The record gives the reactivity of an RNA of 177 nucleotides to DMS and 2A3. It was measured as part of the RMDB library OK1LIB. The reactions ran in a buffer of 150 mM KOAc, 10 mM MgCl2 and 150 mM bicine (pH 8.5), at 24 C. For DMS the reverse transcriptase was MarathonRT. Reactivities are given for positions 27 through 126. For 2A3 the reverse transcriptase was SuperScript II with manganese. The DMS profile rests on 38,430 reads.
[RMDB]
RNA sequence: GGGAACGACUCGAGUAGAGUCGAAAACAACAGAGUUGGGGACAACGGGUUCCUGGUAUGAGGCAGGGGAAAAGGCAACGACGGCCGUUUCGCUGUGCUGCGGUGCCGACACUACCAUCAUCGAAGGCUAUUAUGUAGGAUUCGUCCUACAUAAUAGAAAAGAAACAACAACAACAAC
Reactivity to DMS in 0.01 (KOAc 150mM, MgCl2 10mM, bicine 150mM(pH8.5), 24C), signal-to-noise 9, nucleotides 027 to 126: c080a110a150c190a100g010a100g000u000u000g000g010g030g010a050c080a070a100c100g000g000g010u010u000c010c010u020g010g000u020a030u010g000a070g000g010c060a070g000g010g000g000a050a040a080a120g000g010c020a020a030c060g000a160c070g000g000c010c030g010u020u030u040c150g000c110u030g010u030g020c020u000g010c030g000g010u010g000c010c010g000a080c120a040c050u000a040c010c010a090u010c070a040u010c060g010a080a080g010g010
Reactivity to 2A3 in 0.01 (KOAc 150mM, MgCl2 10mM, bicine 150mM(pH8.5), 24C), signal-to-noise 9, nucleotides 027 to 126: c050a010a010c020a020g110a020g080u060u080g020g000g010g060a030c030a100a040c100g070g030g030u050u060c010c010u030g020g030u170a080u130g040a040g050g000c070a050g020g020g010g050a020a040a050a070g020g000c020a040a020c040g270a030c020g040g010c020c020g020u060u090u080c100g000c090u090g080u160g060c020u010g010c010g010g010u020g010c010c000g030a010c020a020c030u100a080c010c010a080u080c010a020u050c040g070a070a020g090g000